[RMDB]
RNA sequence: GGGAACGACUCGAGUAGAGUCGAAAAGCUCCCCUGUGCUCAGCUGUGACAGGGUAGUCUGGCAGGACGUACAGCAGUUUCCCUCUCAGUUUAGGAGGGCUGUCCUAAGAAUAGGGCUGGCUCUUAACAGUGUCAGUAGUUUCGACUACUGACACUGAAAAGAAACAACAACAACAAC
Reactivity to 2A3 in 0.01 (KOAc 150mM, MgCl2 10mM, bicine 150mM(pH8.5), 24C), signal-to-noise 7, nucleotides 027 to 126: g020c020u070c010c000c000c010u020g030u050g050c020u040c080a150g000c030u070g070u090g170a050c010a030g040g020g010u030a010g040u010c020u020g070g020c040a070g030g070a050c040g040u150a080c030a030g000c010a020g010u020u040u030c000c030c000u000c020u010c010a140g020u070u080u200a110g040g030a010g000g010g000c000u000g000u000c000c010u070a180a110g180a240a250u120a100g020g000g000c030u090g090g000c000u000c000u020u010a080a050
Reactivity to DMS in 0.01 (KOAc 150mM, MgCl2 10mM, bicine 150mM(pH8.5), 24C), signal-to-noise 4, nucleotides 027 to 126: g000c080u010c050c010c020c050u020g020u000g000c030u000c080a080g020c100u000g010u010g000a070c030a060g010g010g000u010a040g010u000c010u010g000g010c070a080g030g000a050c070g010u010a060c060a070g020c070a130g000u000u020u020c000c000c020u030c100u020c120a170g010u000u020u010a090g000g000a000g030g000g010c010u000g020u000c030c000u010a080a210g020a150a130u010a020g000g000g000c000u010g020g010c020u000c000u000u000a040a300
About this RNA: The record gives the reactivity of an RNA of 177 nucleotides to 2A3 and DMS. Conditions: 150 mM KOAc, 10 mM MgCl2 and 150 mM bicine (pH 8.5), 24 C. For 2A3 the reverse transcriptase was SuperScript II with manganese. For DMS the reverse transcriptase was MarathonRT. Source: RMDB libraries RFM100 and RFMREP, as collected in RNAgym.